[RMDB]
RNA sequence: GGGAACGACUCGAGUAGAGUCGAAAAUAAAAGUUGUCAAGACGUAGACAGCAUAAAACGUCGAAGGAACCAGGGCUAGGUUCCAUAAGCCCGAACGAUCUAAGUCAUUGAUCGAUAUGACGAUAAAGGGUAUCAUUAUCUUCGGAUAAUGAUACCCAAAAGAAACAACAACAACAAC
Reactivity to DMS in 0.01 (KOAc 150mM, MgCl2 10mM, bicine 150mM(pH8.5), 24C), signal-to-noise 3, nucleotides 027 to 126: u040a030a090a150a140g000u010u000g000u000c010a060a130g000a050c100g000u030a140g000a030c010a050g030c120a050u000a050a060a110a140c000g010u000c020g040a200a120g000g000a030a010c060c070a170g000g000g000c080u000a100g000g010u030u000c000c020a000u000a040a180g060c000c000c000g040a070a110c080g010a020u000c000u040a020a200g000u050c160a060u050u000g010a000u000c020g000a070u000a070u010g030a040c010g000a120u060a050a100a030
Reactivity to 2A3 in 0.01 (KOAc 150mM, MgCl2 10mM, bicine 150mM(pH8.5), 24C), signal-to-noise 2, nucleotides 027 to 126: u280a030a010a010a020g020u000u000g000u000c000a020a130g070a170c090g040u000a020g050a060c000a020g030c040a060u040a090a060a010a050c000g010u000c000g030a150a030g000g020a040a000c040c020a030g140g070g040c100u160a030g010g030u000u000c010c000a000u070a020a000g040c000c000c000g010a100a020c020g000a020u000c000u070a040a120g260u160c070a030u010u120g000a010u000c000g010a000u070a010u230g010a000c000g020a000u140a030a210a100